[RMDB]
RNA sequence: GGGAACGACUCGAGUAGAGUCGAAAACGUGAUGACCGGCUACGCGCACGGGGAGCUGGCCGACCGAGUGAACCUGGCGAUUACGGCCCUGCGCGACGAGGUUGAGGCCGAGAACCGGGCACGGUACCUUUUUCGUGCCGUUCGCGGCACGAAAAAGAAAAGAAACAACAACAACAAC
Reactivity to 2A3 in 0.01 (KOAc 150mM, MgCl2 10mM, bicine 150mM(pH8.5), 24C), signal-to-noise 1, nucleotides 027 to 126: c000g010u030g000a080u100g020a000c000c000g000g010c060u140a080c000g040c000g000c000a080c080g010g000g000g060a020g080c010u020g020g000c010c000g000a090c000c120g050a060g040u070g020a000a240c000c000u000g000g020c020g000a050u020u220a140c070g010g010c000c000c010u060g000c060g000c000g010a000c010g050a030g060g000u070u140g060a110g060g000c000c000g010a020g040a010a020c030c040g000g000g050c020a020c000g110g000u180a130c000
Reactivity to DMS in 0.01 (KOAc 150mM, MgCl2 10mM, bicine 150mM(pH8.5), 24C), signal-to-noise 1, nucleotides 027 to 126: c070g070u000g000a170u000g010a010c020c090g000g000c070u010a230c090g080c000g060c220a030c220g030g000g080g000a000g020c000u000g060g030c000c110g110a040c000c000g000a240g020u050g060a130a140c070c030u000g000g000c030g000a100u050u010a160c200g000g040c010c000c030u000g020c100g020c000g000a120c110g000a130g030g010u000u010g000a100g030g000c000c000g000a070g040a180a040c000c030g000g000g030c000a070c070g000g000u000a080c150